This 177-nucleotide RNA was probed chemically with DMS and 2A3.

RNA sequence: GGGAACGACUCGAGUAGAGUCGAAAACUCACGACGUUCGCGUCGUGAGAAAUAAAUUCAGCGGUAAUUCGAGCGCAAAUAUUACCGCUGAUGCGCUCCAAAAAAGGGUAUCCUUCGGGAUACCCAACAUAGUAAAAUAGUUCGCUAUUUUACUAUGAAAAGAAACAACAACAACAAC
Reactivity to DMS in 0.01 (KOAc 150mM, MgCl2 10mM, bicine 150mM(pH8.5), 24C), signal-to-noise 6, nucleotides 027 to 126: c010u000c000a010c000g020a020c000g020u010u010c190g020c010g020u000c000g010u000g000a010g000a010a050a050u010a060a070a060u000u000c000a010g010c000g000g000u000a000a010u000u000c180g010a140g010c180g020c140a070a080a090u010a050u000u000a000c000c000g010c000u000g000a000u000g000c130g010c080u000c010c060a000a070a040a070a080a100g000g010g000u000a000u000c000c000u000u020c200g020g010g000a010u000a010c010c010c000a000a020
Reactivity to 2A3 in 0.01 (KOAc 150mM, MgCl2 10mM, bicine 150mM(pH8.5), 24C), signal-to-noise 5, nucleotides 027 to 126: c000u000c000a000c000g000a000c000g010u040u070c180g000c010g120u010c000g000u010g000a000g000a000a020a000u050a000a060a040u040u000c000a000g010c010g000g020u010a000a010u060u150c140g080a120g140c150g020c190a050a110a060u150a030u030u000a000c010c000g000c010u000g000a000u000g000c050g030c020u110c030c020a050a040a020a020a030a050g010g000g000u010a000u000c000c010u040u060c170g100g020g000a000u000a000c000c000c000a000a000
The RNA was probed in 150 mM KOAc, 10 mM MgCl2 and 150 mM bicine (pH 8.5) at 24 C.